Source information
Chemical mapping of a 177-nucleotide RNA with DMS and 2A3. In probing experiments dimethyl sulfate is read out at A N1 and C N3, which are open when not base-paired. DMS adducts were read by reverse transcription with MarathonRT. The data come from the RNA Mapping Database (RMDB), library VIROID.
RNA sequence: GGGAACGACUCGAGUAGAGUCGAAAAUGUUACGGACAAAUUCCGUAGCCAUGUUAGGCCAGCAUUGAAGAGCGUACCUAGCUGCGUUUCAACUUGCGUGGGUUGGGGCGGCUUAGCGGAUUAAGAACACAGAAUCAUUCUUCGGAAUGAUUCUGUGAAAAGAAACAACAACAACAAC
Reactivity to DMS in 0.01 (KOAc 150mM, MgCl2 10mM, bicine 150mM(pH8.5), 24C), signal-to-noise 1, nucleotides 027 to 126: u030g040u010u000a030c010g010g000a070c160a050a090a110u000u000c010c010g000u000a020g000c020c170a060u000g010u000u000a050g000g000c030c010a200g020c020a060u000u000g020a080a110g000a050g010c010g000u000a070c000c030u010a030g000c020u000g020c030g000u000u000u000c040a060a040c110u000u010g000c090g000u000g010g020g020u000u000g000g010g000g040c030g000g010c000u010u000a040g000c060g000g000a110u010u000a150a080g000a090a270
Reactivity to 2A3 in 0.01 (KOAc 150mM, MgCl2 10mM, bicine 150mM(pH8.5), 24C), signal-to-noise 2, nucleotides 027 to 126: u020g010u020u000a010c010g000g000a040c060a090a290a070u240u000c000c000g010u000a000g010c030c030a050u100g020u050u090a040g020g030c020c020a040g000c040a090u080u140g090a150a120g050a020g020c050g000u040a100c010c020u040a030g000c080u030g000c030g040u000u100u110c060a070a040c000u100u130g030c090g160u110g040g070g000u030u050g040g010g040g000c010g040g010c030u070u010a050g020c000g110g020a060u110u150a180a010g090a110a020
The reactions ran in a buffer of 150 mM KOAc, 10 mM MgCl2 and 150 mM bicine (pH 8.5), at 24 C.